This 177-nucleotide RNA was probed chemically with 2A3 and DMS. The 2A3 profile rests on 821 reads. Conditions: 150 mM KOAc, 10 mM MgCl2 and 150 mM bicine (pH 8.5), 24 C. DMS adducts were read by reverse transcription with MarathonRT. For DMS, 2,190 sequencing reads were counted.
RNA sequence: GGGAACGACUCGAGUAGAGUCGAAAAAUAGAGAAGUGAGAGUAGGUAUAGCGCACUUUAUGGAGGGUGAAUAUAGAAUAUACAUAGAAGGUAUACCGAUAACAGUCUAUAGAGGAGAUAAGACAAGAUGUCGAUCAACAUUCGUGUUGAUCGACAUAAAAGAAACAACAACAACAAC
Reactivity to 2A3 in 0.01 (KOAc 150mM, MgCl2 10mM, bicine 150mM(pH8.5), 24C), signal-to-noise 2, nucleotides 027 to 126: a070u040a010g120a030g010a100a010g050u040g020a080g000a000g010u180a070g050g050u000a020u140a080g160c030g000c020a020c010u100u110u060a100u040g100g000a120g000g150g000u010g040a180a000u230a000u060a000g030a100a010u100a000u040a070c070a000u110a120g090a020a000g140g000u020a000u000a000c000c030g030a000u020a020a050c060a000g000u010c000u000a020u110a100g010a110g010g010a030g000a010u080a080a000g050a000c000a080a010g040
Reactivity to DMS in 0.01 (KOAc 150mM, MgCl2 10mM, bicine 150mM(pH8.5), 24C), signal-to-noise 2, nucleotides 027 to 126: a100u000a070g000a030g020a050a080g040u000g000a070g010a070g060u000a050g000g010u020a020u000a090g000c030g010c120a080c030u020u010u010a030u000g050g000a040g020g000g020u010g000a030a110u020a100u020a000g000a130a170u000a020u020a080c100a100u100a060g000a060a030g010g000u020a040u000a070c160c040g000a130u030a050a020c090a070g000u020c010u000a040u000a070g000a060g030g020a030g020a130u020a060a080g020a050c150a000a060g020